[RMDB]
RNA sequence: GGGAACGACUCGAGUAGAGUCGAAAAGGAGCAUCAAUCCGAGAUCUCUGCGGGAGAUUAGCAGCCCACCAUAUGUGAAACAUUUGGACACCAUGGGAACCGUGGGUCGUGGGCCAUGAUGGCUCCAGGCAGCUUACGCCUUCGGGCGUGGGCUGCCAAAAGAAACAACAACAACAAC
Reactivity to 2A3 in 0.01 (KOAc 150mM, MgCl2 10mM, bicine 150mM(pH8.5), 24C), signal-to-noise 7, nucleotides 027 to 126: g010g000a010g000c010a030u010c000a030a090u050c040c050g020a040g000a030u010c030u010c020u100g080c140g120g190g000a050g010a060u060u030a030g100c070a020g000c020c010c000a010c020c000a040u060a040u120g140u080g180a120a130a050c010a040u050u050u100g030g020a020c050a140c180c020a030u040g020g020g120a080a150c030c000g000u020g010g010g000u040c030g000u110g000g000g000c030c000a030u080g010a010u040g070g040c000u000c010c000a000
Reactivity to DMS in 0.01 (KOAc 150mM, MgCl2 10mM, bicine 150mM(pH8.5), 24C), signal-to-noise 4, nucleotides 027 to 126: g000g000a000g000c000a280u000c070a030a070u020c020c040g000a160g020a020u010c010u000c010u000g050c070g030g050g010a040g000a050u000u010a080g010c170a150g010c010c010c020a030c080c150a070u000a050u010g020u020g000a110a100a300c030a030u020u020u020g000g000a090c120a100c010c020a030u020g030g000g040a160a140c050c000g060u010g020g000g010u000c070g000u010g010g000g070c010c080a100u010g000a000u000g020g010c010u000c020c030a130

The record gives the reactivity of an RNA of 177 nucleotides to 2A3 and DMS. The 2A3 profile rests on 6,587 reads.